[RMDB]
RNA sequence: GGGAACGACUCGAGUAGAGUCGAAAAGAAAUUAUAGACUCAUCGGCUCAGGACCAUUGCGGUUGUGCAAAACGGUGUUAUUGCCGAGAAGGGAACGCAUGAGAGGUUGGUGAAAACGUCAAAGGGCCUAACUGUUUCAGUUCGCUGAAACAGUUAGAAAAGAAACAACAACAACAAC
Reactivity to 2A3 in 0.01 (KOAc 150mM, MgCl2 10mM, bicine 150mM(pH8.5), 24C), signal-to-noise 2, nucleotides 027 to 126: g030a040a050a030u300u150a100u090a120g050a020c020u010c030a010u000c030g010g010c020u040c020a050g040g100a040c010c010a020u030u070g020c070g110g040u150u020g070u160g110c010a060a040a010a010c060g000g070u000g060u220u100a130u020u170g000c040c020g040a050g040a030a070g070g030g010a070a010c030g000c070a000u030g010a000g000a020g110g000u030u120g000g030u030g000a010a050a000a000c040g020u030c010a050a060a000g060g010g000c000
Reactivity to DMS in 0.01 (KOAc 150mM, MgCl2 10mM, bicine 150mM(pH8.5), 24C), signal-to-noise 3, nucleotides 027 to 126: g020a110a130a060u000u000a070u020a170g010a060c040u000c030a140u000c040g020g000c120u000c060a050g020g010a190c040c030a130u010u000g020c070g010g030u000u000g020u000g000c040a050a050a060a100c090g000g010u000g000u000u010a120u020u000g000c020c010g000a070g030a080a110g000g010g020a070a030c080g000c060a020u010g010a100g010a060g000g020u000u010g010g010u000g000a020a020a030a070c120g000u000c120a010a080a090g000g010g000c150